Source: RMDB library OK3TST, as collected in RNAgym. This 207-nucleotide RNA was probed chemically with 2A3 and DMS.
RNA sequence: GGGAACGACUCGAGUAGAGUCGAAAAUUGUGUCAUUUGUAUUCCAACAGCAAGUGGCACUAACUAUCGGGCAGUUGGAAUACCUGGUAGUGACUCAGUGCUCCAUAUCUAAGUACUGAGUGAACUUGUCAACUAAGAUAUGGAGUUGGCAAGUGUACGUGUCGAGUCUGUUCGCAGACUCGAUACGAAAAGAAACAACAACAACAAC
Reactivity to 2A3 in 0.01 (KOAc 150mM, MgCl2 10mM, bicine 150mM(pH8.5), 24C), signal-to-noise 9, nucleotides 027 to 156: u140u080g000u000g000u000c000a010u000u000u010g070u070a160u170u190c120c070a090a040c040a130g010c000a000a000g010u000g000g000c000a000c000u000a020a010c000u000a000u010c000g000g010g000c040a130g040u100u100g090g040a100a060u070a090c000c000u000g000g000u000a010g000u000g030a010c000u000c000a000g000u000g010c000u030c070c040a130u110a150u230c130u140a090a000g010u000a010c000u000g000a000g000u020g000a010a010c000u000u000g010u000c000a000a000c010u060a100a040g090a200u150a110u300g220g040a050g010u000u000g000g000c000a010a000g010u020g010u050a030
Reactivity to DMS in 0.01 (KOAc 150mM, MgCl2 10mM, bicine 150mM(pH8.5), 24C), signal-to-noise 4, nucleotides 027 to 156: u000u000g000u000g010u000c020a020u000u000u000g020u000a120u000u000c080c260a130a150c110a230g000c000a010a020g040u000g010g000c000a020c030u000a020a040c010u000a020u000c030g030g020g060c020a060g010u000u020g010g000a250a140u000a010c000c010u000g010g020u000a030g020u000g010a090c010u000c010a020g020u000g000c000u000c070c050a210u000a160u010c120u000a070a040g030u000a000c010u010g000a040g020u000g010a060a050c020u000u000g000u000c000a030a030c010u000a100a140g020a220u000a130u010g020g010a060g000u000u010g000g000c000a030a010g020u000g000u000a060

Source information:
The DMS profile rests on 10,817 reads.